[RMDB]
RNA sequence: GGGAACGACUCGAGUAGAGUCGAAAACGACCUUGAGAUCGGUAGCGCGACAGUACGCUUCCCGCUGAAGAAAGGCGGCUACUGGGAACGCCUGAUCGAUCGCCCGAGCCGCUUCGGCAAGAAGAAGGCGCGCUUCAAGCCGGGCGACAGCCCGCGACCGUUACAAGAUAUUCGUAUCUUGUAACGGAAAAGAAACAACAACAACAAC
Reactivity to 2A3 in 0.01 (KOAc 150mM, MgCl2 10mM, bicine 150mM(pH8.5), 24C), signal-to-noise 3, nucleotides 027 to 156: c050g040a040c010c020u120u110g090a080g040a170u070c060g010g050u030a020g000c000g000c000g060a090c040a070g080u120a030c080g000c030u040u020c030c040c030g000c030u070g020a120a120g080a150a210a050g090g010c000g010g000c020u080a080c050u200g000g010g060a110a060c030g020c000c030u120g020a190u160c040g030a050u100c040g010c010c000c000g000a000g010c000c010g020c030u040u020c000g020g000c060a060a030g010a030a000g000a040a020g080g000c000g000c020g000c000u030u030c020a020a040g020c050c000g000g000g000c030g030a070c060a080g000c000c000c040g010c040g070a070
Reactivity to DMS in 0.01 (KOAc 150mM, MgCl2 10mM, bicine 150mM(pH8.5), 24C), signal-to-noise 1, nucleotides 027 to 156: c040g000a090c020c030u000u010g010a110g010a030u020c010g010g040u000a060g020c030g080c020g000a180c060a050g020u010a130c130g040c040u000u060c010c000c040g000c120u010g020a180a120g020a170a160a060g070g000c040g040g020c020u000a020c090u020g030g010g020a080a120c060g000c010c030u000g010a170u010c040g010a040u010c010g000c010c000c010g000a080g000c020c020g020c020u010u010c000g050g000c020a040a100g000a090a090g000a110a100g010g020c020g000c050g010c010u010u010c040a120a190g000c020c020g000g000g030c020g010a060c150a160g000c040c000c000g010c000g000a150